Chemical mapping of a 177-nucleotide RNA with 2A3 and DMS.
It was measured as part of the RMDB library TTRINS.
The reactions ran in a buffer of 150 mM KOAc, 10 mM MgCl2 and 150 mM bicine (pH 8.5), at 24 C.
For DMS, 11,720 sequencing reads were counted.
RNA sequence: GGGAACGACUCGAGUAGAGUCGAAAAGAUAUGGAGCGCAAGUGCCAGUCUAUCCUUGACCUCUAUGAAUCGGAAACGAUUCAUAGAGGUCAAGGUAAGGACGGUCAUACUUGGCGCUCCUAAGUCACAUAACUUCUAAGUUCGCUUAGAAGUUAUGAAAAGAAACAACAACAACAAC
Reactivity to 2A3 in 0.01 (KOAc 150mM, MgCl2 10mM, bicine 150mM(pH8.5), 24C), signal-to-noise 2, nucleotides 027 to 126: g040a010u090a040u260g000g000a010g000c000g000c010a000a020g010u010g030c030c060a090g030u000c010u060a210u180c010c010u010u010g010a000c000c010u010c010u020a010u010g020a010a010u000c000g030g080a110a090a090c020g000a010u000u000c000a000u000a000g000a000g020g010u010c010a010a000g000g000u000a020a000g030g010a000c000g010g010u120c050a060u080a160c010u010u080g300g020c010g000c010u000c000c000u000a010a000g000u030c000a000
Reactivity to DMS in 0.01 (KOAc 150mM, MgCl2 10mM, bicine 150mM(pH8.5), 24C), signal-to-noise 7, nucleotides 027 to 126: g010a060u010a300u010g010g000a000g020c000g030c010a010a030g030u000g010c040c010a190g030u000c000u000a300u010c000c000u000u000g000a010c000c000u000c000u000a000u000g010a020a000u000c010g010g010a150a080a220c010g000a010u000u010c010a000u000a010g000a010g000g000u000c000a000a000g000g010u000a010a140g000g000a010c020g010g010u010c300a140u000a060c010u000u000g010g030c000g020c000u000c000c000u000a000a060g000u000c050a290